[RMDB]
RNA sequence: GGGAACGACUCGAGUAGAGUCGAAAAUUCGCAGGUUUUAUUGCCACUGUAGCGAAAAUCGAUAGUGGGGUAUUUCUUAUCCACGUCCAUGACAAACUCGCCGUUUUCAUCGGUUCGGGUUCGGCCGUCAACCAUCCUGGUUCGCCAGGAUGGUUGAAAAAGAAACAACAACAACAAC
Reactivity to DMS in 0.01 (KOAc 150mM, MgCl2 10mM, bicine 150mM(pH8.5), 24C), signal-to-noise 1, nucleotides 027 to 126: u000u000c030g060c030a140g030g000u000u030u000u000a060u040u010g020c080c090a080c110u000g030u010a070g000c020g000a030a020a080a160u020c140g000a030u000a080g050u000g010g000g000g020u020a080u000u000u000c140u000u000a060u000c000c010a020c010g000u010c040c080a060u000g000a050c020a090a080a040c010u000c040g050c260c030g000u000u010u000u000c100a040u000c040g010g010u000u000c100g020g010g000u010u000c000g020g020c040c010g000
Reactivity to 2A3 in 0.01 (KOAc 150mM, MgCl2 10mM, bicine 150mM(pH8.5), 24C), signal-to-noise 2, nucleotides 027 to 126: u050u030c000g030c070a110g060g070u060u070u060u200a250u180u300g100c060c000a060c060u210g050u110a040g020c010g020a050a030a010a050u070c030g040a030u060a160g040u020g000g090g020g000u070a120u040u150u030c070u020u080a020u040c000c010a000c000g040u060c030c010a100u120g030a060c050a030a060a000c000u020c000g030c000c010g000u040u000u070u040c050a100u060c020g090g000u150u160c030g010g070g040u050u080c010g080g040c020c000g030